[RMDB]
RNA sequence: GGGAACGACUCGAGUAGAGUCGAAAACUCGAAAGAGACCUGCAUAUCUUAGGCAGAUGAACAAGUCGCGUCUGAAAAGCGAAAGCCCUAAGAUAUGCAGCUGUGAGGACUUGGCGCAGAAAAUAAAGAUUUAUAAUCCAUUCGUGGAUUAUAAAUCAAAAGAAACAACAACAACAAC
Reactivity to DMS in 0.01 (KOAc 150mM, MgCl2 10mM, bicine 150mM(pH8.5), 24C), signal-to-noise 4, nucleotides 027 to 126: c020u010c010g010a090a090a070g000a040g020a150c260c000u000g000c000a000u000a000u000c000u000u010a000g000g000c010a000g000a000u000g000a060a150c020a010a020g000u000c020g010c010g010u010c010u000g020a150a090a100a140g000c010g000a120a080a150g010c030c000c000u000a000a000g010a000u000a000u000g000c010a000g000c010u000g000u000g000a000g030g000a010c000u000u010g010g000c000g020c000a030g000a170a060a130a110u030a110a110a120
Reactivity to 2A3 in 0.01 (KOAc 150mM, MgCl2 10mM, bicine 150mM(pH8.5), 24C), signal-to-noise 9, nucleotides 027 to 126: c010u010c010g030a030a040a010g080a010g030a060c010c000u000g000c000a000u000a000u000c000u000u000a000g000g010c010a000g010a030u020g010a050a030c010a010a010g010u020c010g010c010g050u000c010u040g100a220a200a110a010g020c020g050a060a030a010g010c010c000c000u000a000a000g000a000u000a000u000g000c000a000g000c000u010g010u010g010a040g060g030a000c000u000u000g010g000c010g000c020a010g110a090a080a030a010u250a040a120a020
Background: An RNA of 177 nucleotides, treated with DMS and 2A3 and read out base by base. 2A3 adducts were read by reverse transcription with SuperScript II with manganese. For DMS the reverse transcriptase was MarathonRT. The reactions ran in a buffer of 150 mM KOAc, 10 mM MgCl2 and 150 mM bicine (pH 8.5), at 24 C. 2A3 is a SHAPE reagent: it acylates the 2'-hydroxyl of flexible nucleotides of all four kinds. For 2A3, 22,987 sequencing reads were counted.